[RMDB]
RNA sequence: GGGAACGACUCGAGUAGAGUCGAAAAAGAGGAUCGCUUGAGGUCAGGAGUAUGAGACCAGCCUGUCCAACAUGGUGAAACUCCGUCUGUACUAAAAAUACAAAAAUUAGCUGGGUGUGGUGGCAGGCGUAUCGCCUAAGUUCGCUUAGGCGAUACGAAAAGAAACAACAACAACAAC
Reactivity to 2A3 in 0.01 (KOAc 150mM, MgCl2 10mM, bicine 150mM(pH8.5), 24C), signal-to-noise 1, nucleotides 027 to 126: a000g020a000g020g030a040u040c030g010c020u040u070g000a010g000g000u020c030a010g000g000a030g040u290a070u300g140a070g080a080c010c040a000g000c010c000u030g000u100c020c000a020a010c000a050u170g000g000u010g000a010a070a010c000u000c010c010g050u060c050u070g030u050a030c070u180a080a060a030a060a040u060a030c070a030a030a030a060a100u140u110a000g030c040u050g000g040g000u060g060u040g010g030u030g010g000c020a030g040g000
Reactivity to DMS in 0.01 (KOAc 150mM, MgCl2 10mM, bicine 150mM(pH8.5), 24C), signal-to-noise 3, nucleotides 027 to 126: a060g010a070g000g000a170u000c040g020c060u010u000g010a110g000g030u000c020a020g010g010a050g010u000a080u020g010a130g020a060c060c080a070g020c020c020u010g000u010c010c000a020a110c130a160u000g000g010u000g010a040a040a170c000u000c010c030g010u000c060u000g000u000a030c020u020a010a040a030a060a170u010a020c040a000a000a060a030a070u020u010a050g010c070u010g020g000g020u000g010u010g000g030u000g010g010c060a020g000g000

Description
Source: RMDB library OK2TRN, as collected in RNAgym. This 177-nucleotide RNA was probed chemically with 2A3 and DMS. The RNA was probed in 150 mM KOAc, 10 mM MgCl2 and 150 mM bicine (pH 8.5) at 24 C. Reactivities are given for positions 27 through 126. For 2A3, 1,395 sequencing reads were counted. For DMS, 3,158 sequencing reads were counted.